[RMDB]
This 177-nucleotide RNA was probed chemically with 2A3 and DMS. Conditions: 150 mM KOAc, 10 mM MgCl2 and 150 mM bicine (pH 8.5), 24 C. The DMS profile rests on 1,503 reads. For DMS the reverse transcriptase was MarathonRT.

RNA sequence: GGGAACGACUCGAGUAGAGUCGAAAAUCAUUAUAGAGCGAGAGAAGAUGGUGCAACUGAGUACGUGAACGUCAUUACGCCAACGACAUUUAACGCUGUUGCAAUGGAGAACGAUUUGACCAAGUUCGUGUGAAUUUUACUUCGGUAAAAUUCACACAAAAGAAACAACAACAACAAC
Reactivity to 2A3 in 0.01 (KOAc 150mM, MgCl2 10mM, bicine 150mM(pH8.5), 24C), signal-to-noise 1, nucleotides 027 to 126: u010c000a000u040u200a140u090a180g090a000g020c000g000a020g020a010g050a160a000g060a000u140g020g020u040g010c000a020a010c070u050g000a020g040u120a070c030g040u010g040a070a000c020g060u030c010a030u080u100a080c060g030c000c000a180a020c020g020a010c000a000u150u030u130a080a040c050g000c070u070g050u000u000g000c030a000a090u090g080g030a040g000a030a000c000g000a030u090u000u050g060a020c030c000a040a010g020u040u110c090
Reactivity to DMS in 0.01 (KOAc 150mM, MgCl2 10mM, bicine 150mM(pH8.5), 24C), signal-to-noise 2, nucleotides 027 to 126: u000c040a040u010u010a140u010a110g020a070g000c000g010a110g020a140g000a080a100g000a040u000g030g030u000g010c060a050a060c070u000g010a160g020u000a060c100g020u000g020a060a050c040g000u000c030a150u000u010a050c130g000c060c070a040a040c010g030a090c060a080u010u010u000a070a120c100g000c030u010g020u020u000g000c060a090a100u010g000g000a070g000a040a040c050g010a100u000u000u000g010a060c030c040a060a070g000u010u010c090